[RMDB]
RNA sequence: GGGAACGACUCGAGUAGAGUCGAAAAAAUCCAUUUUGGUAACGCCGGAACCAUAGGCAUCUACGGGGACGAUAUUAUAUGUCCCAGUGAGAUUGCACCCCGUGUGCUAGAGGCACUUGCCUACUACGGUUUUAAACCGAAUCUUCGUAAAACGUUCGGCAUAAAAUAACUUCGGUUAUUUUAUGCCAAAAGAAACAACAACAACAAC
Reactivity to 2A3 in 0.01 (KOAc 150mM, MgCl2 10mM, bicine 150mM(pH8.5), 24C), signal-to-noise 2, nucleotides 027 to 156: a000a000u060c020c020a080u130u120u060u070g050g000u010a070a000c030g000c020c020g060g050a110a130c060c010a110u090a050g000g040c040a040u020c060u080a010c040g020g000g030g000a000c020g000a040u040a060u290u250a130u070a070u280g000u000c020c000c000a010g000u090g000a030g010a010u000u050g040c010a070c020c010c040c060g110u090g000u010g260c020u000a000g020a010g040g000c000a070c250u110u300g000c000c000u070a180c010u010a020c050g000g090u030u000u070u200a190a090a010c000c000g010a000a000u020c010u090u060c050g010u020a000a040a080a130c020g000u010u060c000
Reactivity to DMS in 0.01 (KOAc 150mM, MgCl2 10mM, bicine 150mM(pH8.5), 24C), signal-to-noise 1, nucleotides 027 to 156: a050a100u020c020c030a190u020u010u030u000g040g000u000a090a040c090g050c080c000g000g000a160a140c080c030a060u000a040g060g000c060a110u000c070u000a030c080g070g000g000g030a090c080g010a080u010a070u000u040a140u030a180u010g030u000c000c010c000a300g000u010g010a100g000a080u000u000g050c030a090c100c030c040c030g050u000g040u000g020c050u010a040g000a130g020g010c070a150c100u000u000g020c000c000u000a050c030u000a140c000g030g030u010u000u010u000a020a100a090c030c000g000a110a050u000c100u010u000c060g000u020a070a070a130a130c030g000u010u000c050
This 207-nucleotide RNA was probed chemically with 2A3 and DMS. The data come from the RNA Mapping Database (RMDB), library PDB130. For DMS the reverse transcriptase was MarathonRT. Conditions: 150 mM KOAc, 10 mM MgCl2 and 150 mM bicine (pH 8.5), 24 C.